[RMDB]
RNA sequence: GGGAACGACUCGAGUAGAGUCGAAAAAGUAAGUUUUUUCACAUAUAACCAACUGUUAACAUGGAAAGAUGUGAUGUUAAGUAGGUUCAAUGCAAACUUUUGUAUAUGGGUAAGUAACAACCUGAACUGCAUUAGACAAAUUCGUUUGUCUAAUGCAAAAAGAAACAACAACAACAAC
Reactivity to DMS in 0.01 (KOAc 150mM, MgCl2 10mM, bicine 150mM(pH8.5), 24C), signal-to-noise 5, nucleotides 027 to 126: a050g030u010a080a100g010u000u000u000u000u000u000c040a030c020a040u010a040u010a070a170c040c020a060a050c100u000g010u010u010a040a060c130a060u000g010g000a080a110a100g020a050u000g010u000g010a030u000g020u010u000a030a090g020u000a040g010g010u000u010c090a060a060u000g000c050a040a100a080c100u000u010u010u000g010u000a070u000a050u010g010g000g010u000a030a120g010u000a020a050c070a030a080c060c020u000g010a050a080c160
Reactivity to 2A3 in 0.01 (KOAc 150mM, MgCl2 10mM, bicine 150mM(pH8.5), 24C), signal-to-noise 3, nucleotides 027 to 126: a000g090u100a090a040g000u020u010u010u000u080u110c040a040c000a020u110a010u020a080a070c030c010a040a030c040u060g110u300u090a090a060c030a080u080g070g060a040a090a030g080a090u060g030u070g050a030u020g060u130u050a100a100g030u030a030g080g010u060u050c050a070a020u050g030c000a010a040a190c010u000u140u140u120g130u070a130u000a060u210g050g000g000u030a060a040g010u020a020a060c050a020a020c050c000u040g050a050a040c070